[RMDB]
RNA sequence: GGGAACGACUCGAGUAGAGUCGAAAAAAUAUUUUUUUUAUGACUAAAUGGGAUCUCCUCAUAGCGAUCGAGGUAUUUCUCAUUGCUCUCUUCCGAUAAAAAGACGUUCUCAUCAUCUGGCUGAAGAAGAAUUGUCACAUGCGGAUAACAUGGAACAACGCAUACACAUAUUCGUAUGUGUAUGCGUAAAAGAAACAACAACAACAAC
Reactivity to 2A3 in 0.01 (KOAc 150mM, MgCl2 10mM, bicine 150mM(pH8.5), 24C), signal-to-noise 3, nucleotides 027 to 156: a000a020u250a130u150u070u070u020u010u010u010u070a120u250g010a020c020u130a080a080a030u000g000g010g000a000u010c010u010c020c010u020c030a130u150a120g130c140g210a110u150c120g000a040g000g030u130a080u000u040u020c000u000c000a000u000u020g000c000u010c010u000c010u140u040c020c040g090a080u130a100a220a050a010a020g070a030c000g020u000u010c010u000c030a110u030c010a030u000c050u100g190g000c080u080g030a030a010g020a040a020g020a120a140u100u160g030u010c010a030c000a100u100g020c050g070g010a030u040a120a020c020a080u040g000g060a070a020c030a030
Reactivity to DMS in 0.01 (KOAc 150mM, MgCl2 10mM, bicine 150mM(pH8.5), 24C), signal-to-noise 1, nucleotides 027 to 156: a080a040u020a000u000u000u000u000u000u000u000u000a070u020g020a130c030u040a040a050a050u010g010g020g010a050u000c060u010c030c020u000c020a140u010a190g020c170g000a090u010c100g000a040g000g030u010a090u000u000u000c000u000c030a060u000u000g000c040u010c050u000c000u000u000c000c010g010a300u040a040a040a040a050a040g020a050c010g030u010u000c000u010c030a250u010c070a080u000c060u010g020g050c160u000g000a100a100g030a070a080g000a040a110u000u000g030u010c080a050c000a030u000g010c000g000g050a270u000a060a020c010a030u000g000g020a070a080c050a150
This 207-nucleotide RNA was probed chemically with 2A3 and DMS. Reactivities are rounded to 0.1 and cut off at 0 and 3. For DMS, 2,448 sequencing reads were counted. The RNA was probed in 150 mM KOAc, 10 mM MgCl2 and 150 mM bicine (pH 8.5) at 24 C.